[RMDB]
RNA sequence: GGGAACGACUCGAGUAGAGUCGAAAAGAAGAACAGUGCGUCACACUGUUGACGAAUUGCUGUGAUCGACAGCACGAUCAAACAAACUGUGUGGAUAGCACACAACUAUCAAACAAAAAGAAAGAAAGGGAAAGAUAGAGUUCGCUCUAUCUUUCCCAAAAGAAACAACAACAACAAC
Reactivity to 2A3 in 0.01 (KOAc 150mM, MgCl2 10mM, bicine 150mM(pH8.5), 24C), signal-to-noise 1, nucleotides 027 to 126: g080a010a010g080a090a010c060a000g000u000g000c000g030u000c000a000c000a000c000u000g000u000u000g000a000c000g050a090a100u140u070g000c000u010g000u090g030a300u070c000g100a000c000a020g030c000a000c000g000a140u000c050a020a000a110c030a010a150a080c130u030g090u000g000u010g000g070a000u040a060g000c000a000c000a000c000a000a000c000u010a000u150c000a040a000a040c070a000a000a010a000a000g130a020a050a000g070a020a000a000
Reactivity to DMS in 0.01 (KOAc 150mM, MgCl2 10mM, bicine 150mM(pH8.5), 24C), signal-to-noise 2, nucleotides 027 to 126: g000a050a050g000a030a110c170a100g000u010g030c000g020u000c010a000c040a030c010u000g000u000u000g000a110c090g000a160a100u070u040g000c000u000g000u010g030a080u020c190g040a020c000a020g000c000a040c110g010a210u000c010a080a070a050c100a030a140a160c080u000g030u000g000u010g000g000a020u010a070g010c030a010c000a000c170a140a000c100u000a060u000c020a100a050a220c200a100a010a020a070a040g000a100a000a190g010a140a130a120
The record gives the reactivity of an RNA of 177 nucleotides to 2A3 and DMS. For 2A3 the reverse transcriptase was SuperScript II with manganese. Conditions: 150 mM KOAc, 10 mM MgCl2 and 150 mM bicine (pH 8.5), 24 C.